[RMDB]
RNA sequence: GGGAACGACUCGAGUAGAGUCGAAAAUGUGAUUCAAUUCAUCAAGGAAGCGGUUGAGCAGCAUUUAGCUGUUGUUAUGUUUCCAAAUACCAAAGGAAUCCUUCAUCAUACUAUAACAUCCGUAAUGAAUGUUACUGCGAUGUUCCGUCAGUAUGAGACAUGCUUAGGUUUUCGAACCUAAGCAUGUAAAAGAAACAACAACAACAAC
Reactivity to 2A3 in 0.01 (KOAc 150mM, MgCl2 10mM, bicine 150mM(pH8.5), 24C), signal-to-noise 5, nucleotides 027 to 156: u120g020u070g020a010u040u070c050a030a140u130u090c040a080u050c080a150a080g050g000a040a010g030c030g070g050u190u090g020a000g000c020a000g010c030a050u110u170u180a080g010c020u010g010u020u000g030u050u050a060u070g000u010u010u000c000c000a000a040a040u150a050c050c030a090a020a040g060g010a060a050u040c020c010u070u080c020a160u010c010a010u010a020c010u050a020u020a200a000c000a010u000c010c000g010u010a020a000u120g300a130a050u300g030u010u010a010c020u090g110c140g030a000u000g010u010u040c100c070g110u080c040a010g000u000a000u010g010a020g020
Reactivity to DMS in 0.01 (KOAc 150mM, MgCl2 10mM, bicine 150mM(pH8.5), 24C), signal-to-noise 3, nucleotides 027 to 156: u000g010u010g030a140u010u000c060a050a030u010u010c040a200u010c060a170a150g020g000a030a060g020c090g000g010u000u010g000a060g000c020a070g010c010a100u010u000u000a150g030c010u000g030u000u000g030u000u000a280u010g010u000u000u000c010c020a050a170a080u010a120c030c070a030a090a150g010g000a080a060u000c050c050u010u000c030a080u000c010a100u010a090c020u010a050u000a000a010c000a000u000c010c010g000u010a130a080u000g000a030a010u000g010u000u000a020c050u010g000c040g010a030u000g000u000u000c010c040g010u010c180a050g000u000a040u000g000a190g020